An RNA of 177 nucleotides, treated with 2A3 and DMS and read out base by base. The 2A3 profile rests on 2,986 reads. The RNA was probed in 150 mM KOAc, 10 mM MgCl2 and 150 mM bicine (pH 8.5) at 24 C. It was measured as part of the RMDB library M2PK50. Reactivities are given for positions 27 through 126. The DMS profile rests on 2,521 reads.

RNA sequence: GGGAACGACUCGAGUAGAGUCGAAAACGCGAACUGUUCGCAGUUCGCGAAAUAACAAACAACACCUAACCUACUGCGAUAAGCCCUAGCUAAGUAGGUAAAAAAGAGGAAAGUUCGCUUUCCUCAACGCCUAAUUUAAGUUCGCUUAAAUUAGGCGAAAAGAAACAACAACAACAAC
Reactivity to 2A3 in 0.01 (KOAc 150mM, MgCl2 10mM, bicine 150mM(pH8.5), 24C), signal-to-noise 2, nucleotides 027 to 126: c000g000c000g000a000a000c000u010g050u050u110c200g010c120a000g000u010u000c000g020c000g000a000a010a010u040a000a020c060a040a140a010c050a030a020c040a030c090c070u140a040a060c000c000u000a000c000u020g010c000g030a010u030a210a070g020c000c020c020u030a010g010c000u010a030a020g000u000a010g000g000u030a000a040a030a000a010a000g040a010g010g010a000a050a010g020u130u210c300g060c250u000u000u000c010c000u000c000a000a020
Reactivity to DMS in 0.01 (KOAc 150mM, MgCl2 10mM, bicine 150mM(pH8.5), 24C), signal-to-noise 3, nucleotides 027 to 126: c010g030c010g020a010a020c000u000g020u010u000c180g030c000a000g020u000u000c000g050c000g000a020a030a060u020a040a120c160a070a090a100c120a060a070c060a050c190c110u000a080a040c010c010u000a020c000u000g010c060g010a130u010a080a140g010c010c010c020u000a250g000c000u000a060a050g030u000a000g000g020u000a020a090a060a080a040a030g010a010g000g000a010a000a020g020u000u000c250g010c000u000u000u000c000c000u000c000a040a040